[RMDB]
Conditions: 150 mM KOAc, 10 mM MgCl2 and 150 mM bicine (pH 8.5), 24 C. This 177-nucleotide RNA was probed chemically with 2A3. The data come from the RNA Mapping Database (RMDB), library OK1LIB.

RNA sequence: GGGAACGACUCGAGUAGAGUCGAAAAUUGCUCAAGUGAACGUACAACUAAAGAUUCUACAUCCUGAAUGGUAAUUUCUUUUGUAUCAAAACAAUAGAGCAUUAAUUUUUGCAGUUCAUUCAUGGCCGAGGGGAGUCGUGUUCGCACGACUCCCCUCAAAAGAAACAACAACAACAAC
Reactivity to 2A3 in 0.01 (KOAc 150mM, MgCl2 10mM, bicine 150mM(pH8.5), 24C), signal-to-noise 1, nucleotides 027 to 126: u100u010g030c080u030c000a050a140g020u020g020a120a000c000g020u000a100c030a000a030c030u280a300a000a000g080a050u000u000c000u080a000c000a000u100c040c200u300g180a150a070u150g000g000u200a000a300u180u030u000c000u000u050u000u000g020u000a100u050c020a090a060a000a060c050a010a010u070a100g150a000g020c000a000u050u100a000a000u090u140u140u120u140g190c050a000g050u000u030c030a030u030u260c090a020u070g050g030c000c000
About this RNA
For 2A3 the reverse transcriptase was SuperScript II with manganese. Values cover nucleotides 27 to 126.